[RMDB]
RNA sequence: GGGAACGACUCGAGUAGAGUCGAAAAAUGAGAUCCCAUCUUGCACACUGUGCUAAUUUGAGAUUCUCAUGCCUCCUACUUGGAGGGAUCUGGACUAGAAGUCAGGGCAUCUGACUCUGCCAGCCACAAAACGUACAAGGCUUCGGCCUUGUACGAAGCUAGAAGAACCGUUCGCGGUUCUUCUAGCAAAAGAAACAACAACAACAAC
Reactivity to 2A3 in 0.01 (KOAc 150mM, MgCl2 10mM, bicine 150mM(pH8.5), 24C), signal-to-noise 3, nucleotides 027 to 156: a000u010g000a000g000a000u000c010c010c000a000u000c000u020u030g000c020a020c040a070c130u300g020u000g000c060u110a080a090u000u010u020g020a030g000a030u300u070c010u010c010a020u040g120c000c000u000c000c000u130a280c150u140u280g000g000a010g010g000g010a040u030c010u040g000g060a100c030u100a110g020a130a010g090u000c000a000g020g080g180c090a120u070c140u000g000a010c000u000c000u000g010c000c000a030g000c010c000a090c020a020a150a060a030c010g000u000a000c000a000a000g000g000c000u030u140c180g060g000c000c000u000u000g000u010a000c000g010a000a010

The data come from the RNA Mapping Database (RMDB), library M2RFPK. The record gives the reactivity of an RNA of 207 nucleotides to 2A3. Reactivities are given for positions 27 through 156. For 2A3 the reverse transcriptase was SuperScript II with manganese. Conditions: 150 mM KOAc, 10 mM MgCl2 and 150 mM bicine (pH 8.5), 24 C. The 2A3 profile rests on 1,702 reads.